[RMDB]
RNA sequence: GGGAACGACUCGAGUAGAGUCGAAAAUGUGUCCUGUUAGAAGUCUCAAAAUAGCAAGCUACGGUUACGAAAUUGUCUAGUUUCGUGACAAGAGAUUGAUAGACUCGCAAACUAAUGGCUUGAGUUAUGUGUCUUUAGUUUGUUAAAUGAAGACAUACUCAGCUAAUAUCUUCGGAUAUUAGCUGAGAAAAGAAACAACAACAACAAC
Reactivity to 2A3 in 0.01 (KOAc 150mM, MgCl2 10mM, bicine 150mM(pH8.5), 24C), signal-to-noise 4, nucleotides 027 to 156: u180g060u020g030u020c010c010u000g050u030u030a120g010a160a010g050u020c020u020c070a160a200a110a120u120a110g020c070a080a010g030c020u060a020c040g050g000u000u000a000c010g000a000a000a020u070u090g070u020c000u030a010g000u000u000u000c010g000u010g010a000c010a020a030g040a010g020a010u070u170g100a050u030a050g000a000c000u000c020g000c000a000a010a000c010u010a030a010u050g000g000c010u030u100g080a030g100u160u140a090u100g050u010g000u000c000u000u020u000a010g000u020u000u010g000u020u060a030a050a040u150g090a070a020g070a000c010a020u050a040
Reactivity to DMS in 0.01 (KOAc 150mM, MgCl2 10mM, bicine 150mM(pH8.5), 24C), signal-to-noise 2, nucleotides 027 to 156: u000g010u000g010u000c010c040u020g020u020u000a100g010a150a090g000u010c000u010c050a070a060a120a230u000a090g010c030a060a060g010c010u010a090c100g030g020u000u010a010c010g000a030a010a020u000u000g040u000c140u000a100g010u000u000u000c000g050u000g030a010c010a060a100g000a130g020a060u010u000g020a120u000a090g000a030c000u000c040g030c010a020a020a060c020u010a030a060u000g000g000c010u010u000g000a160g020u000u000a080u000g030u000g010u000c000u000u000u000a020g000u010u000u000g030u000u000a020a060a130u000g000a050a050g000a040c010a040u000a130

Structure probing data (2A3 and DMS) for a 207-nucleotide construct.